[RMDB]
Structure probing data (DMS and 2A3) for a 177-nucleotide construct. The 2A3 profile rests on 1,697 reads. It was measured as part of the RMDB library OK2TRN. For 2A3 the reverse transcriptase was SuperScript II with manganese.

RNA sequence: GGGAACGACUCGAGUAGAGUCGAAAAUUGUUCAGUCAGCUGAAACAAGUCAAAAAUACAGUCUCCUUAGGCCGGAACUGUAAAGCACCUGCAUGGACAAUGGUUUUGCUCCGGUUCUCUCAGAUUGCAUGUAAAAUCGGUUCGCCGAUUUUACAUGAAAAGAAACAACAACAACAAC
Reactivity to DMS in 0.01 (KOAc 150mM, MgCl2 10mM, bicine 150mM(pH8.5), 24C), signal-to-noise 3, nucleotides 027 to 126: u000u000g010u000u000c010a040g000u010c120a070g020c060u000g020a100a090a090c090a070a070g000u030c090a020a100a100a120a110u000a030c020a020g000u000c110u000c000c010u000u010a110g010g020c200c280g000g000a040a030c010u000g000u010a010a070a140g000c090a030c130c030u000g000c070a060u000g000g000a040c050a040a060u000g010g010u000u000u000u000g000c030u000c020c040g000g000u000u000c040u000c010u010c060a100g010a110u010u000g010
Reactivity to 2A3 in 0.01 (KOAc 150mM, MgCl2 10mM, bicine 150mM(pH8.5), 24C), signal-to-noise 1, nucleotides 027 to 126: u010u030g010u040u040c010a000g050u060c030a040g020c050u080g070a080a130a090c060a050a110g120u120c070a000a150a070a000a000u070a010c000a000g000u000c020u060c210c020u090u060a100g100g070c010c000g000g010a030a000c000u030g000u010a090a030a020g000c010a010c010c020u020g060c010a050u050g000g000a020c000a020a050u040g070g000u080u060u060u080g000c020u030c000c040g080g000u050u000c030u000c000u000c000a020g000a210u140u150g060